[RMDB]
RNA sequence: GGGAACGACUCGAGUAGAGUCGAAAACGUUGGGGUGGAUCGCCUCCAUACCGAGAUUAGCCAAUUGAUCCGCCACAUCGAAAUUGGUUAAGCCAAUCGGGCGCACUUUUUCUGCGCCGACCAGGCAGCCCUACCCUAUGUUCGCAUAGGGUAGGGCAAAAGAAACAACAACAACAAC
Reactivity to DMS in 0.01 (KOAc 150mM, MgCl2 10mM, bicine 150mM(pH8.5), 24C), signal-to-noise 2, nucleotides 027 to 126: c040g010u000u000g000g010g000g040u000g010g030a020u000c020g000c170c030u020c010c030a130u010a110c210c110g000a020g010a190u000u010a110g020c100c110a040a090u000u000g050a040u010c030c030g020c000c010a020c050a000u000c020g000a070a090a120u000u000g000g000u010u030a060a120g010c000c000a080a140u000c060g030g020g010c010g000c010a050c120u010u000u000u000u000c060u000g010c010g060c000c010g010a060c090c040a090g010g050c030a210
Reactivity to 2A3 in 0.01 (KOAc 150mM, MgCl2 10mM, bicine 150mM(pH8.5), 24C), signal-to-noise 1, nucleotides 027 to 126: c010g010u030u060g000g000g010g000u020g060g010a010u000c010g070c020c000u000c010c010a170u070a200c040c080g000a030g010a140u140u170a020g000c050c110a110a240u080u180g000a020u000c000c020g000c010c020a040c030a040u080c020g090a000a070a160u030u040g050g000u140u100a120a080g000c010c010a020a010u050c070g050g050g080c000g020c010a020c020u080u240u040u180u080c060u060g030c000g000c000c000g000a000c000c030a010g010g050c020a020